[RMDB]
RNA sequence: GGGAACGACUCGAGUAGAGUCGAAAAGGUCGGAGCUUCGGCUCCGACCAAAGCAGGAUUACCAAAUCCCAGCAAGCAGCAGCAGCAAGCAAGCAGGAAGCAAAACCAUUACGUUCGCGUAAUGGAACUUUAGGAUAGUGUUCGCACUAUCCUAAAGAAAAGAAACAACAACAACAAC
Reactivity to 2A3 in 0.01 (KOAc 150mM, MgCl2 10mM, bicine 150mM(pH8.5), 24C), signal-to-noise 3, nucleotides 027 to 126: g010g010u000c010g000g010a020g010c040u120u130c300g120g000c010u010c000c000g020a000c000c000a000a000a000g000c010a010g030g030a050u040u080a080c030c010a060a040a030u030c020c020c000a030g040c030a050a020g010c010a000g000c010a010g010c000a010g000c010a000a060g000c000a020a020g000c010a020g060g070a080a000g050c060a030a030a060a170c010c010a010u010u000a010c010g020u010u060c270g000c010g100u000a000a000u010g010g020a010a010
Reactivity to DMS in 0.01 (KOAc 150mM, MgCl2 10mM, bicine 150mM(pH8.5), 24C), signal-to-noise 4, nucleotides 027 to 126: g000g010u000c000g020g020a020g020c010u000u020c210g020g020c000u000c010c000g000a000c000c000a000a010a070g000c100a090g010g000a040u000u000a120c120c070a070a090a070u000c010c010c030a130g030c100a080a090g010c030a040g010c030a050g010c050a040g020c040a040a040g020c060a040a080g010c040a060g000g010a060a070g000c080a050a070a100a150c010c000a000u000u000a010c000g000u000u000c170g020c020g020u010a000a010u000g000g010a020a050